[RMDB]
RNA sequence: GGGAACGACUCGAGUAGAGUCGAAAAAUAGGGAUAGGUGCGAUAGGCAACCCAUGCGAUGCGUCCGGCUGAUUGCUCUGGGUCUUCGUAGACAAUCAAGUGGUGAUCGUACAACCUAAAGAGCUCGACGUUACAGUACGUUCGCGUACUGUAACGUAAAAGAAACAACAACAACAAC
Reactivity to 2A3 in 0.01 (KOAc 150mM, MgCl2 10mM, bicine 150mM(pH8.5), 24C), signal-to-noise 2, nucleotides 027 to 126: a010u060a020g030g000g030a030u060a120g070g040u040g030c030g070a140u100a150g150g000c000a020a080c000c010c020a000u080g030c030g010a020u030g120c030g030u030c010c000g000g020c030u070g010a130u020u090g020c070u010c020u090g130g000g000u030c040u090u060c080g160u090a000g020a050c010a010a030u050c000a050a000g080u050g060g000u050g030a020u010c020g010u000a000c030a030a040c010c010u100a050a040a070g090a030g070c040u020c050g050
Reactivity to DMS in 0.01 (KOAc 150mM, MgCl2 10mM, bicine 150mM(pH8.5), 24C), signal-to-noise 3, nucleotides 027 to 126: a100u020a060g010g010g000a130u000a060g010g010u010g010c010g000a120u020a080g000g020c100a110a090c030c010c040a160u020g000c130g030a040u000g000c120g000u000c000c020g020g000c040u000g000a070u000u000g010c100u000c050u030g010g010g010u000c150u010u020c070g010u000a040g010a010c050a040a030u000c020a040a180g000u010g000g000u010g010a090u010c020g010u010a020c100a060a140c030c010u020a050a090a100g000a100g010c060u020c070g000